[RMDB]
RNA sequence: GGGAACGACUCGAGUAGAGUCGAAAAUAAGCAAAAGACAACCACCUUUCCCGCUGACAAUAGCGUUAUCCCUCUGCACUUCGGUAAUAUGAGGGCACAGUAAAUCCCGCAAGGAUGAGAAUCUGAUUAAACAGUUACAGCUUCGGCUGUAACUGAAGUAUUUAUAGCUCUUCGGAGCUAUAAAUACAAAAGAAACAACAACAACAAC
Reactivity to DMS in 0.01 (KOAc 150mM, MgCl2 10mM, bicine 150mM(pH8.5), 24C), signal-to-noise 2, nucleotides 027 to 156: u000a130a150g050c070a050a110a070a170g020a100c060a140a170c040c020a050c050c020u000u010u000c030c010c020g000c070u000g000a080c060a060a100u000a040g000c050g010u010u010a080u010c000c000c000u000c010u000g000c060a100c080u000u000c130g050g010u000a100a120u000a070u000g000a050g020g020g020c030a070c060a090g000u020a100a090a070u000c000c030c010g000c130a130a120g000g000a060u010g000a190g010a120a110u000c030u010g000a180u000u010a130a130a210c000a030g020u000u000a000c010a000g000c000u000u000c300g050g040c020u000g010u000a000a000c000u000g010a010a090
Reactivity to 2A3 in 0.01 (KOAc 150mM, MgCl2 10mM, bicine 150mM(pH8.5), 24C), signal-to-noise 3, nucleotides 027 to 156: u090a010a010g060c060a050a040a050a060g100a080c040a060a040c060c020a070c010c010u010u040u020c030c050c000g000c050u050g020a030c050a120a180u090a190g010c020g090u100u100a100u180c010c000c020u040c010u020g030c020a010c070u040u040c130g100g020u030a030a020u090a080u300g010a000g000g010g030c000a010c000a020g040u030a000a070a070u020c000c000c020g040c070a040a020g030g010a020u040g020a010g020a070a060u050c040u030g050a070u110u210a070a080a030c000a000g000u010u000a000c000a000g030c000u050u090c210g080g000c000u000g000u010a000a000c000u000g000a000a000
This 207-nucleotide RNA was probed chemically with DMS and 2A3.
It was measured as part of the RMDB library M2RFPK.